[RMDB]
RNA sequence: GGGAACGACUCGAGUAGAGUCGAAAAGUACGGUACUCGUACAUGCUAGUGAUAGUCACACCAUGCGUACGCUGUGACAUGGACGGUACAGUAUGCUAGCUAGAUACAUGACGUACGACUACAGUACUCAACCGUCCGAAUUCGUUCGGACGGUUGAAAAAGAAACAACAACAACAAC
Reactivity to DMS in 0.01 (KOAc 150mM, MgCl2 10mM, bicine 150mM(pH8.5), 24C), signal-to-noise 2, nucleotides 027 to 126: g020u000a000c000g000g060u000a030c120u000c000g020u000a000c010a200u000g020c030u000a040g000u000g010a140u010a080g070u000c090a100c150a110c050c020a040u010g000c100g000u000a060c090g000c170u010g000u000g020a070c010a000u000g000g000a090c230g020g010u010a040c010a070g040u000a080u000g010c050u000a010g010c010u010a060g000a180u010a070c270a090u010g020a090c130g000u000a030c010g000a030c040u010a010c040a050g000u000a010c020
Reactivity to 2A3 in 0.01 (KOAc 150mM, MgCl2 10mM, bicine 150mM(pH8.5), 24C), signal-to-noise 3, nucleotides 027 to 126: g000u000a010c010g030g030u000a030c000u010c010g000u000a000c000a050u100g000c000u010a000g030u000g100a070u050a080g090u070c000a010c010a000c090c030a010u060g050c030g140u110a120c130g040c300u210g020u060g060a090c010a010u020g000g040a110c090g080g060u150a040c040a070g130u040a020u140g000c000u010a000g000c020u020a070g050a130u180a100c140a110u160g130a060c120g010u000a000c000g000a010c000u010a020c020a010g010u020a020c000
Chemical mapping of a 177-nucleotide RNA with DMS and 2A3. The reactions ran in a buffer of 150 mM KOAc, 10 mM MgCl2 and 150 mM bicine (pH 8.5), at 24 C. For 2A3 the reverse transcriptase was SuperScript II with manganese. It was measured as part of the RMDB library OK2TRN.